An RNA of 207 nucleotides, treated with DMS and 2A3 and read out base by base. The DMS profile rests on 2,804 reads. 2A3 adducts were read by reverse transcription with SuperScript II with manganese. The RNA was probed in 150 mM KOAc, 10 mM MgCl2 and 150 mM bicine (pH 8.5) at 24 C. Values cover nucleotides 27 to 156.
[RMDB]
RNA sequence: GGGAACGACUCGAGUAGAGUCGAAAACUUUACUGGCCAGAUAAGAAAAGACCGAGAGGUUCAAGCUUAUAGGGCAGAAAGCGGGGGACAGCAGUACUAAACAUUCCCUGUGGCUGAGACGAAGGUAAAAAGGGUCAUAACUUCGGUUAUGACCCAACUAAUUAGAGAGGUUCGCCUCUCUAAUUAGAAAAGAAACAACAACAACAAC
Reactivity to DMS in 0.01 (KOAc 150mM, MgCl2 10mM, bicine 150mM(pH8.5), 24C), signal-to-noise 2, nucleotides 027 to 156: c010u000u000u010a080c000u000g050g080c020c000a170g040a100u010a050a040g000a120a120a270a290g000a010c000c000g010a280g000a250g000g010u010u020c040a100a190g000c010u010u000a030u000a070g030g010g030c020a060g020a030a050a050g040c020g000g000g000g000g010a100c030a090g030c010a050g000u000a140c040u000a030a100a080c010a170u000u010c010c000c010u010g010u000g010g000c020u000g000a110g000a140c050g000a100a050g020g010u010a030a060a080a100a150g020g030g030u010c010a020u000a010a020c020u000u010c300g050g010u000u010a000u010g020a030c010c010c000a000a020
Reactivity to 2A3 in 0.01 (KOAc 150mM, MgCl2 10mM, bicine 150mM(pH8.5), 24C), signal-to-noise 2, nucleotides 027 to 156: c010u040u070u090a120c000u070g120g040c000c000a070g030a140u060a000a040g020a040a110a040a020g010a010c030c000g030a010g020a050g160g000u070u060c050a050a000g000c010u000u030a010u020a060g010g020g000c010a010g020a010a020a010g020c090g000g020g030g020g000a010c000a010g000c010a010g050u070a060c040u100a070a150a020c050a020u050u050c000c010c020u020g040u050g030g010c010u010g020a010g010a030c130g020a040a040g040g020u100a010a040a030a050a060g000g000g000u000c010a010u000a000a000c000u070u080c180g060g010u000u000a000u010g000a000c000c000c000a010a010
The data come from the RNA Mapping Database (RMDB), library M2RFPK. For 2A3, 978 sequencing reads were counted.